An RNA of 177 nucleotides, treated with DMS and 2A3 and read out base by base. For DMS, 6,026 sequencing reads were counted. For DMS the reverse transcriptase was MarathonRT. High 2A3 reactivity points to a flexible backbone, as in loops and unpaired stretches. Values are in units of 0.01, from 0 to 300, in steps of 10. The RNA was probed in 150 mM KOAc, 10 mM MgCl2 and 150 mM bicine (pH 8.5) at 24 C.
[RMDB]
RNA sequence: GGGAACGACUCGAGUAGAGUCGAAAAGAAGGGCUGCUGUUUGACUCCAAGAAGAUGCUGCGCGCGAUCUGCCGCAAGCUCGUGGAGCAGUUCGAGGUUCUGGCCGUGAUCAGCCUGCCUAACGGCGUACGUUGAAACGAUUCGUCGUUUCAACGUAAAAAGAAACAACAACAACAAC
Reactivity to DMS in 0.01 (KOAc 150mM, MgCl2 10mM, bicine 150mM(pH8.5), 24C), signal-to-noise 4, nucleotides 027 to 126: g010a120a120g000g000g020c020u000g020c100u000g020u000u020u010g000a160c030u000c010c020a050a090g020a080a090g000a060u020g020c010u000g010c000g020c180g020c010g010a120u010c160u010g000c010c040g010c040a040a050g020c020u000c030g030u000g000g010a160g010c000a040g020u000u000c100g000a110g020g010u010u000c050u010g010g020c030c020g020u000g000a080u010c040a030g010c020c030u010g000c040c020u000a090a060c070g020g000c020g020
Reactivity to 2A3 in 0.01 (KOAc 150mM, MgCl2 10mM, bicine 150mM(pH8.5), 24C), signal-to-noise 3, nucleotides 027 to 126: g070a020a060g010g010g000c010u030g030c050u050g200u160u210u140g130a220c020u000c020c000a020a020g090a060a020g080a050u160g000c020u020g010c000g020c030g000c010g210a300u070c100u280g000c010c030g030c010a010a050g010c010u010c020g030u030g010g010a040g000c020a030g010u070u070c050g000a080g000g000u070u070c060u060g060g000c000c020g050u020g010a060u030c010a010g030c010c000u020g000c000c000u030a060a020c030g030g010c040g020